[RMDB]
The data come from the RNA Mapping Database (RMDB), library TTRDES. This 177-nucleotide RNA was probed chemically with DMS. Reactivities are given for positions 27 through 126.
RNA sequence: GGGAACGACUCGAGUAGAGUCGAAAAGAUAUGGAAGCUAGGUGUGCCAGAAUCCAUUCGGAAACGAAUGAUUCGGUAAUUCACUCAGCUUCCUAAGUCAAAAGUCAAGCCCUUCGGGGCUUGACAACAUCACAUUUCCGUUCGCGGAAAUGUGAUGAAAAGAAACAACAACAACAAC
Reactivity to DMS in 0.01 (KOAc 150mM, MgCl2 10mM, bicine 150mM(pH8.5), 24C), signal-to-noise 1, nucleotides 027 to 126: g000a010u010a300u000g020g010a030a000g010c010u010a050g000g060u010g030u000g000c020c020a210g010a020a020u050c120c120a010u000u000c000g040g000a080a060a170c010g030a000a010u010g020a040u000u000c000g030g000u000a070a100u020u000c040a010c040u000c000a000g010c020u000u000c000c010u000a050a100g000u020c010a100a050a110a170g010u010c000a020a000g000c000c020c000u000u000c230g030g010g010g010c020u000u000g010a000c000a060a100